[RMDB]
RNA sequence: GGGAACGACUCGAGUAGAGUCGAAAAUCUUACUUCGGUAAGAAGAUCUCCUAAGUCGCUAGCUGUCGUACGUGCUCAACAGCUUUAUCGGAAACGAUAAAGACAUGAGCAUUGAAACAGCUUGGACCGAUAUGGACAGCCGCGAUUUCGAUCGCAACCUAUGUUGCCAAUUCGUUGGCAACAUAGGAAAAGAAACAACAACAACAAC
Reactivity to DMS in 0.01 (KOAc 150mM, MgCl2 10mM, bicine 150mM(pH8.5), 24C), signal-to-noise 2, nucleotides 027 to 156: u000c020u020u000a020c000u010u000c300g000g050u020a020a040g030a040a100g020a150u000c100u010c000c000u000a220a160g020u000c010g010c070u020a040g000c010u010g010u000c020g000u010a300c300g020u010g010c010u010c000a010a060c040a180g000c010u000u020u010a000u010c010g020g000a300a130a210c010g040a020u000a010a010a010g010a030c070a300u000g010a010g020c010a000u000u000g060a290a020a010c010a050g030c010u010u010g090g000a000c030c000g010a180u010a110u020g020g020a070c130a140g000c030c060g030c040g010a090u000u020u000c180g020a150u000c040g060c050a070a230
Reactivity to 2A3 in 0.01 (KOAc 150mM, MgCl2 10mM, bicine 150mM(pH8.5), 24C), signal-to-noise 5, nucleotides 027 to 156: u000c000u000u000a010c020u010u070c270g100g010u020a000a000g010a020a010g070a090u040c050u010c040c010u050a070a040g010u020c040g030c280u050a020g000c000u010g020u070c030g060u110a090c020g010u010g000c000u010c000a040a150c030a150g010c000u000u000u010a000u000c010g020g030a080a020a090c000g000a000u010a010a010a000g030a040c030a100u050g000a010g000c010a000u010u060g010a000a010a010c000a000g000c030u000u030g000g000a020c020c020g030a030u040a110u300g120g020a040c070a080g150c060c080g000c010g020a020u060u110u210c170g070a030u040c020g010c020a020a020
Source: RMDB library RNAMAK, as collected in RNAgym. The record gives the reactivity of an RNA of 207 nucleotides to DMS and 2A3. DMS (dimethyl sulfate) methylates the pairing face of unpaired adenines and cytosines. Values are in units of 0.01, from 0 to 300, in steps of 10. As a SHAPE reagent, 2A3 marks flexible, mostly unpaired nucleotides at the ribose 2'-OH. For 2A3 the reverse transcriptase was SuperScript II with manganese.